About this RNA:
Structure probing data (2A3 and DMS) for a 177-nucleotide construct. The reactions ran in a buffer of 150 mM KOAc, 10 mM MgCl2 and 150 mM bicine (pH 8.5), at 24 C.

RNA sequence: GGGAACGACUCGAGUAGAGUCGAAAAUCAUCAAACAUGGAGCCCAUGUUUAGUGUGAGGUUCUGUAUGAUGUGUUUAUCAUAUUAUUCUUGGCAUUGAAUAUGAGAGCUGCAAUAUACCUGGUGUCACGACCUAAUGAUUUCGAUCAUUAGGUCGUAAAAGAAACAACAACAACAAC
Reactivity to 2A3 in 0.01 (KOAc 150mM, MgCl2 10mM, bicine 150mM(pH8.5), 24C), signal-to-noise 7, nucleotides 027 to 126: u090c020a020u030c020a010a050a110c070a070u060g110g020a020g020c000c020c000a010u020g080u050u110u070a110g000u060g010u020g110a070g020g030u080u020c060u060g020u040a050u010g000a010u000g100u000g110u100u130u160a120u030c020a010u020a020u120u040a060u040u100c030u050u050g120g000c010a010u030u040g070a030a010u050a000u060g100a140g020a020g080c040u110g030c060a060a040u120a020u070a220c010c020u070g060g000u040g050u110c020
Reactivity to DMS in 0.01 (KOAc 150mM, MgCl2 10mM, bicine 150mM(pH8.5), 24C), signal-to-noise 4, nucleotides 027 to 126: u030c020a040u010c020a040a060a120c190a070u010g000g050a070g000c030c010c000a010u000g000u020u000u020a030g010u000g020u000g000a050g010g020u010u000c090u000g010u020a010u000g010a020u010g010u030g020u030u070u030a070u010c020a010u000a000u030u010a110u000u000c010u000u000g000g020c000a020u010u020g000a020a030u000a010u010g000a150g010a170g010c020u000g030c050a060a120u040a120u020a100c100c070u030g010g020u010g010u020c160

The data come from the RNA Mapping Database (RMDB), library OK1LIB. 2A3 adducts were read by reverse transcription with SuperScript II with manganese.